[RMDB]
RNA sequence: GGGAACGACUCGAGUAGAGUCGAAAACUGUGAGUGUGGAGACCUUUGGGUCCUGUGCCCUCCACCCAGUCUCGGCUUCCCACCAAAGCCUUGUCAGGGGCUGGGUUUGCCAUCCCAUGGUGGGCAGAAAAGUCGUUAUAUUCGUAUAACGACUUUUAAAAGAAACAACAACAACAAC
Reactivity to 2A3 in 0.01 (KOAc 150mM, MgCl2 10mM, bicine 150mM(pH8.5), 24C), signal-to-noise 3, nucleotides 027 to 126: c040u060g060u120g120a070g010u080g010u060g040g080a110g020a110c030c010u080u140u190g170g020g010u060c060c010u210g100u100g100c020c010c000u020c010c000a010c000c000c000a000g000u000c020u020c060g000g000c000u040u020c030c020c000a010c000c020a070a020a010g020c000c030u120u130g150u160c090a070g000g000g010g040c010u030g010g000g000u020u070u080g000c000c000a040u000c010c000c000a000u010g030g020u020g020g030g000c010a000g180
Reactivity to DMS in 0.01 (KOAc 150mM, MgCl2 10mM, bicine 150mM(pH8.5), 24C), signal-to-noise 9, nucleotides 027 to 126: c080u010g020u000g000a070g010u010g010u000g010g010a120g010a040c030c020u000u010u020g020g010g000u000c030c070u000g010u000g000c020c020c000u000c030c070a120c000c000c020a030g000u000c050u000c070g010g000c020u000u000c040c010c030a100c090c090a090a090a060g010c010c030u000u010g000u010c210a150g010g000g000g000c020u000g000g000g010u000u000u010g010c060c060a110u000c010c010c010a120u000g010g020u000g000g010g020c260a080g000